RNA sequence: GGGAACGACUCGAGUAGAGUCGAAAACAAAUAGGACGUACAUCAUCACACAAUGCACCGUCAGAUCUGUGCGCUGUGGAGAUGGUCACAUCUGACGGUGGCCAUCUCUGAUGGUGUACGUCCUCAGGCUUCUCGUGCAUUUCGAUGCAUGAGGAGCAAAAGAAACAACAACAACAAC
Reactivity to DMS in 0.01 (KOAc 150mM, MgCl2 10mM, bicine 150mM(pH8.5), 24C), signal-to-noise 7, nucleotides 027 to 126: c040a070a080a110u060a010g000g020a000c000g000u000a020c000a010u000c000a000u000c010a300c030a020c030a020a020u000g000c000a000c000c050g000u020c230a120g010a070u020c080u010g020u000g010c030g020c060u010g020u000g000g010a020g000a010u000g000g010u000c000a000c000a060u030c140u030g020a080c180g000g010u000g000g000c020c000a010u000c010u000c020u020g000a000u010g010g000u000g010u000a000c000g020u000c010c000u000c100a030g010
Reactivity to 2A3 in 0.01 (KOAc 150mM, MgCl2 10mM, bicine 150mM(pH8.5), 24C), signal-to-noise 9, nucleotides 027 to 126: c030a000a080a080u260a040g000g000a000c000g000u000a000c000a000u010c000a000u000c000a000c010a000c010a050a030u030g000c000a000c010c020g080u090c100a060g090a300u090c030u050g000u010g000c020g000c020u010g010u030g060g010a020g000a020u020g000g000u010c000a000c000a030u170c200u300g100a080c170g060g000u000g000g000c000c000a010u000c010u000c010u010g000a000u000g000g000u000g000u000a000c000g000u000c000c000u000c000a000g000
The record gives the reactivity of an RNA of 177 nucleotides to DMS and 2A3. Values cover nucleotides 27 to 126. The data come from the RNA Mapping Database (RMDB), library OK1LIB.